[RMDB]
RNA sequence: GGGAACGACUCGAGUAGAGUCGAAAACAAGCGGGAGGGCUCCCGGGGCGCCGCACGGGCGCAGUGCUGCGCGAGACUCUAUGCCCGUGACAGAGUGGUAUCAGAGCAGACUUGCUUUACAUCAAUGCAUUACGAAAAGCUUCGGCUUUUCGUAAUGAAAAGAAACAACAACAACAAC
Reactivity to DMS in 0.01 (KOAc 150mM, MgCl2 10mM, bicine 150mM(pH8.5), 24C), signal-to-noise 1, nucleotides 027 to 126: c050a100a080g000c050g020g020g010a080g010g000g010c040u000c050c040c000g020g000g000g030c030g040c030c070g000c090a030c110g000g020g040c020g000c090a070g030u000g010c060u010g010c050g030c110g000a110g000a110c010u000c010u000a060u010g000c000c030c040g010u000g030a110c160a060g020a070g040u000g000g000u000a050u010c030a050g000a110g040c010a050g000a140c040u000u000g000c020u000u000u000a090c140a080u000c040a070a060u000g000

An RNA of 177 nucleotides, treated with DMS and read out base by base. The DMS profile rests on 989 reads.